Annotation:
Structure probing data (2A3 and DMS) for a 177-nucleotide construct. The DMS profile rests on 4,775 reads. The RNA was probed in 150 mM KOAc, 10 mM MgCl2 and 150 mM bicine (pH 8.5) at 24 C.
RNA sequence: GGGAACGACUCGAGUAGAGUCGAAAAUCCGCAGCAUUCGUGCUGCGGAACUUACCGAGGUUGUUGCUCGGUAUAACAUCAAAACCCUUGGAAACAAGGGAAACAAUGAGCUAUUCGUAGCUCAUAAAUCCUGUUAAAGGUUCGCCUUUAACAGGAUAAAAGAAACAACAACAACAAC
Reactivity to 2A3 in 0.01 (KOAc 150mM, MgCl2 10mM, bicine 150mM(pH8.5), 24C), signal-to-noise 2, nucleotides 027 to 126: u010c000c000g020c000a000g040c000a010u030u060c170g140u060g020c000u000g020c000g000g000a000a020c000u020u030a010c000c000g000a000g050g050u070u050g020u070u090g140c010u000c000g010g000u020a000u010a000a000c000a050u110c090a010a020a120a270c000c000c010u000u010g000g000a030a040a020c000a010a020g000g000g020a060a000a010c010a000a040u010g000a000g000c010u000a000u050u080c170g140u050a000g000c000u000c000a000u000a000a050
Reactivity to DMS in 0.01 (KOAc 150mM, MgCl2 10mM, bicine 150mM(pH8.5), 24C), signal-to-noise 4, nucleotides 027 to 126: u000c000c000g000c000a010g010c010a040u000u010c220g020u000g010c000u000g010c010g000g010a010a010c050u000u000a010c010c010g010a030g010g000u000u000g010u010u010g010c020u000c010g000g010u000a010u000a040a070c100a120u010c210a110a090a080a160c000c000c000u010u000g010g000a180a090a180c000a010a010g000g000g010a010a020a040c080a050a020u000g000a000g010c000u000a020u000u010c170g030u010a010g010c000u000c000a000u000a050a100